[RMDB]
RNA sequence: GGGAACGACUCGAGUAGAGUCGAAAAGUUGCGUGAUUAUUUAGCUGACUAUGACGUAGCAGUCACUGCCGGCCCAUUCAUGGAUAAUGCUAUUAAUGUUGGUGGUACAGGAUUACAGUAUGCCGCCUAAGUCGCUGCUUCGGCAGCGACAAAAGAAACAACAACAACAAC
Reactivity to DMS in 0.01 (KOAc 150mM, MgCl2 10mM, bicine 150mM(pH8.5), 24C), signal-to-noise 2, nucleotides 027 to 129: g050u000u010g000c040g000u010g020a040u080u000a150u000u000u000a150g080c050u020g000a080c070u030a080u020g000a050c170g040u010a000g060c060a120g000u030c070a050c070u030g030c010c020g020g060c000c010c060a060u040u070c140a110u020g030g010a050u020a000a170u130g080c090u010a000u030u030a090a000u000g080u070u000g000g050u030g010g050u100a070c020a010g020g010a220u050u010a000c110a090g000u030a060u020g040c110c000g030c040c010u070a040a070
Reactivity to 2A3 in 0.01 (KOAc 150mM, MgCl2 10mM, bicine 150mM(pH8.5), 24C), signal-to-noise 2, nucleotides 027 to 129: g130u130u110g000c000g020u070g020a000u000u160a020u000u140u130a000g000c080u010g070a100c050u090a050u140g070a050c070g020u060a000g000c010a000g000u070c010a000c050u020g000c000c030g000g000c000c010c010a050u080u060c010a000u100g000g000a110u070a150a030u290g010c020u000a000u160u100a040a010u130g050u090u090g020g000u000g000g000u000a040c000a010g110g110a100u090u090a020c010a040g070u200a050u090g000c000c000g010c010c010u000a050a000